An RNA of 177 nucleotides, treated with DMS and 2A3 and read out base by base. Source: RMDB library OK1LIB, as collected in RNAgym. For 2A3 the reverse transcriptase was SuperScript II with manganese. For DMS the reverse transcriptase was MarathonRT. The reactions ran in a buffer of 150 mM KOAc, 10 mM MgCl2 and 150 mM bicine (pH 8.5), at 24 C.
RNA sequence: GGGAACGACUCGAGUAGAGUCGAAAAUCCGUGCAUGACGACUGGGAUGCUUACUGGGCUGCAAGGGUGGAAGAACGGCGACGGAUUCUGGCCAAAGAGACGCCAGAAGCUAGACAGGCUCGGCUGACUCACGAAAUCAGUUCGCUGAUUUCGUGAGAAAAGAAACAACAACAACAAC
Reactivity to DMS in 0.01 (KOAc 150mM, MgCl2 10mM, bicine 150mM(pH8.5), 24C), signal-to-noise 3, nucleotides 027 to 126: u010c010c020g000u050g000c020a040u040g080a120c060g000a110c060u000g020g020g000a090u020g000c120u010u000a060c080u020g030g010g000c050u000g000c090a020a100g000g010g040u000g020g000a100a040g000a030a070c080g000g020c110g000a100c090g000g010a080u010u000c010u000g000g030c000c080a060a130a120g010a140g010a170c190g000c000c000a030g000a030a030g000c030u000a050g000a140c140a060g000g000c060u030c070g000g010c000u000g000a190
Reactivity to 2A3 in 0.01 (KOAc 150mM, MgCl2 10mM, bicine 150mM(pH8.5), 24C), signal-to-noise 2, nucleotides 027 to 126: u050c010c010g030u140g050c090a060u180g070a080c020g000a060c020u030g000g010g070a040u060g040c000u070u020a130c020u090g020g030g010c020u060g000c040a080a110g060g040g000u090g010g030a050a010g060a100a030c000g020g000c010g020a020c010g040g000a010u000u000c000u030g020g000c000c000a090a140a020g130a010g010a040c090g010c040c000a000g000a010a010g000c020u050a010g020a060c020a040g060g000c030u010c000g040g000c010u040g040a030